[RMDB]
RNA sequence: GGGAACGACUCGAGUAGAGUCGAAAAGCCGGCAUGGCCCCAGCCUCCUCGCUGGCGCCGGCUGGGCAACGAUCCGAGGGAACUAUUCCUCUCGAGAAUCGGCAAAUGGGGCCCCUCGCUCGUAUCUAAAGAACAAUGUUCGCAUUGUUCAAAAGAAACAACAACAACAAC
Reactivity to 2A3 in 0.01 (KOAc 150mM, MgCl2 10mM, bicine 150mM(pH8.5), 24C), signal-to-noise 1, nucleotides 027 to 129: g010c000c010g010g000c040a100u050g000g000c020c030c000c010a000g010c000c030u050c000c000u080c020g050c070u060g000g000c010g000c000c000g000g000c000u000g020g040g000c010a020a000c000g000a010u000c020c010g010a010g000g000g000a000a050c030u050a210u130u000c050c010u130c000u030c000g100a120g020a170a080u040c000g070g000c030a020a010a040u020g000g000g000g000c000c000c000c000u010c010g020c000u060c040g050u040a080u050c010u070a150a000a010
Conditions: 150 mM KOAc, 10 mM MgCl2 and 150 mM bicine (pH 8.5), 24 C.
An RNA of 170 nucleotides, treated with 2A3 and read out base by base.